[RMDB]
RNA sequence: GGGAACGACUCGAGUAGAGUCGAAAAGUAUAAAAUCUGCAAGUAGUGCUAUUGUUGGAAUCACCGUACCUAUUUAGGUUUACGCGCCAAGAUCGGUGGAUAGCAGCCCUAUCAAUAUCUAGGAGAAAAAACCCAGGACUGUUCGCAGUCCUGGGAAGUAUAGAUCAUCCUUCGGGAUGAUCUAUACAAAAGAAACAACAACAACAAC
Reactivity to DMS in 0.01 (KOAc 150mM, MgCl2 10mM, bicine 150mM(pH8.5), 24C), signal-to-noise 1, nucleotides 027 to 156: g000u000a150u000a040a040a100a110u000c050u000g030c040a090a070g050u000a090g010u010g000c010u000a050u000u000g030u000u020g000g020a090a120u010c020a070c050c000g000u000a000c010c030u010a220u010u000u010a020g010g050u000u010u000a070c070g030c090g020c020c040a050a150g010a040u010c050g000g040u000g010g010a050u000a070g020c050a100g000c040c010c040u000a180u010c040a070a090u020a090u000c080u000a100g000g000a120g050a030a080a050a000a100a180c000c010c000a030g000g000a040c000u000g000u010u010c240g020c000a020g010u000c000c010u010g020g000g000a000a010
Reactivity to 2A3 in 0.01 (KOAc 150mM, MgCl2 10mM, bicine 150mM(pH8.5), 24C), signal-to-noise 2, nucleotides 027 to 156: g020u000a020u090a150a120a080a060u100c080u100g050c070a100a020g010u110a010g030u090g060c000u000a030u070u000g080u040u070g050g030a070a100u140c050a010c050c000g050u060a030c010c000u050a120u280u130u230a050g000g030u000u000u090a030c080g020c000g000c060c010a060a020g070a160u080c040g020g030u060g010g000a010u010a030g010c010a030g020c010c010c000u090a150u130c050a130a040u030a090u300c090u110a060g030g020a050g150a110a070a010a060a000a060c010c000c000a000g000g000a000c000u000g020u030u140c240g000c090a010g010u000c000c010u000g030g030g000a000a000

An RNA of 207 nucleotides, treated with DMS and 2A3 and read out base by base.